Source information: This 177-nucleotide RNA was probed chemically with DMS and 2A3.
RNA sequence: GGGAACGACUCGAGUAGAGUCGAAAACAAUGGACGAAAGUCUGACGGAGCAACGCCGCGUGAGCGAAGAAGGCCUUCGGGUCGUAAAGCUCUGUUGUCAGGGAAGAACAAGUGCCAUUCGAAUAGGAGAUUCCCCACAAUUCGUUGUGGGGAAUCUAAAAGAAACAACAACAACAAC
Reactivity to DMS in 0.01 (KOAc 150mM, MgCl2 10mM, bicine 150mM(pH8.5), 24C), signal-to-noise 2, nucleotides 027 to 126: c140a100a010u010g010g010a050c000g000a170a110a110g030u000c000u010g020a180c010g000g000a120g010c030a080a090c050g000c090c060g020c140g000u010g010a090g000c020g020a060a090g020a150a210g050g000c010c010u010u030c150g010g010g020u000c000g000u000a050a120a300g000c000u000c000u000g030u000u000g000u010c000a090g000g010g020a050a050g010a120a080c060a090a060g020u000g000c050c000a010u010u000c070g030a070a080u020a080g000g000
Reactivity to 2A3 in 0.01 (KOAc 150mM, MgCl2 10mM, bicine 150mM(pH8.5), 24C), signal-to-noise 1, nucleotides 027 to 126: c010a000a010u020g020g000a000c010g040a120a040a010g110u040c000u000g030a000c030g040g020a080g000c030a060a060c040g020c070c020g010c110g150u150g110a050g010c030g010a080a010g040a020a060g070g030c000c000u010u120c180g080g000g000u000c010g000u040a010a010a000g030c000u000c000u050g130u100u100g020u000c000a000g010g000g110a110a040g040a070a020c040a180a080g070u100g180c000c010a000u080u060c120g060a070a070u070a220g030g030

Record summary:
The reactions ran in a buffer of 150 mM KOAc, 10 mM MgCl2 and 150 mM bicine (pH 8.5), at 24 C. DMS adducts were read by reverse transcription with MarathonRT.